[RMDB]
RNA sequence: GGGAACGACUCGAGUAGAGUCGAAAAGUCGCCUUCGGGCGACGCUCGGUCUGUUUUGCCUGAACCCAUCAACAGCUGGGAGAUUAAUCAACCACACUGAAAAUGUCACUGGUGCAUUCGUGCACCAUCAUGUAUACGUUUUCGAACGUAUACAUGAAAAAGAAACAACAACAACAAC
Reactivity to 2A3 in 0.01 (KOAc 150mM, MgCl2 10mM, bicine 150mM(pH8.5), 24C), signal-to-noise 9, nucleotides 027 to 126: g000u000c000g000c000c000u020u060c290g080g000g000c000g000a000c000g000c010u030c030g010g020u030c040u100g090u040u040u080u130g070c010c020u030g050a080a080c020c010c000a040u070c030a020a120c000a040g020c030u040g010g090g000a080g010a050u110u190a100a150u110c020a010a050c020c010a030c010a010c050u070g060a050a030a060a120u170g080u140c040a020c180u050g000g000u000g000c010a010u030u060c150g070u030g000c000a000c010c000a000
Reactivity to DMS in 0.01 (KOAc 150mM, MgCl2 10mM, bicine 150mM(pH8.5), 24C), signal-to-noise 8, nucleotides 027 to 126: g010u000c000g030c000c000u000u020c190g030g010g020c000g010a000c010g010c050u000c030g010g010u000c030u010g000u000u010u000u010g010c030c020u010g010a100a150c050c040c010a090u000c060a060a120c070a070g010c290u000g000g010g010a160g000a080u010u000a090a100u000c070a050a190c030c030a040c110a080c050u000g000a050a060a090a090u010g000u000c110a080c230u010g010g000u000g010c000a040u000u010c250g030u000g010c000a010c000c010a020
Description
The data come from the RNA Mapping Database (RMDB), library RFMREP. This 177-nucleotide RNA was probed chemically with 2A3 and DMS. 2A3 adducts were read by reverse transcription with SuperScript II with manganese. The reactions ran in a buffer of 150 mM KOAc, 10 mM MgCl2 and 150 mM bicine (pH 8.5), at 24 C. Reactivities are given for positions 27 through 126. For 2A3, 18,369 sequencing reads were counted.